[RMDB]
RNA sequence: GGGAACGACUCGAGUAGAGUCGAAAAAGAAAGGAGGCCCGGUUACCUAUAUAGAGAUAAUGAUACCGGCGCGCGCGCGCUGGCUGGCCUCCGCAUUGAAUAGAGUAGGUACACGCGCGCGUAAAAACUAACAAAAUAUGUUCGCAUAUUUUGUUAGAAAAGAAACAACAACAACAAC
Reactivity to DMS in 0.01 (KOAc 150mM, MgCl2 10mM, bicine 150mM(pH8.5), 24C), signal-to-noise 3, nucleotides 027 to 126: a130g000a110a100a140g020g000a020g000g030c030c020c170g010g000u000u000a040c010c000u020a090u010a230u000a120g000a130g010a100u010a070a090u000g000a160u010a060c050c030g000g000c090g020c020g000c040g010c020g010c020g010c140u010g010g010c060u000g000g000c020c000u000c000c030g000c140a070u000u000g010a080a170u000a120g000a090g010u010a020g010g010u010a100c070a060c010g020c010g010c020g000c000g020u000a030a030a060a090a100
Reactivity to 2A3 in 0.01 (KOAc 150mM, MgCl2 10mM, bicine 150mM(pH8.5), 24C), signal-to-noise 2, nucleotides 027 to 126: a000g030a030a020a000g010g000a010g010g030c010c040c010g000g010u020u020a010c010c010u050a060u020a020u080a260g120a060g030a120u100a180a110u190g060a020u040a130c020c000g040g000c020g030c010g010c000g000c000g000c010g040c180u040g070g000c050u020g040g000c000c010u000c020c010g000c000a090u130u190g030a050a060u070a150g080a010g090u070a020g020g030u080a040c010a010c020g030c000g010c000g010c010g000u000a030a020a020a010a000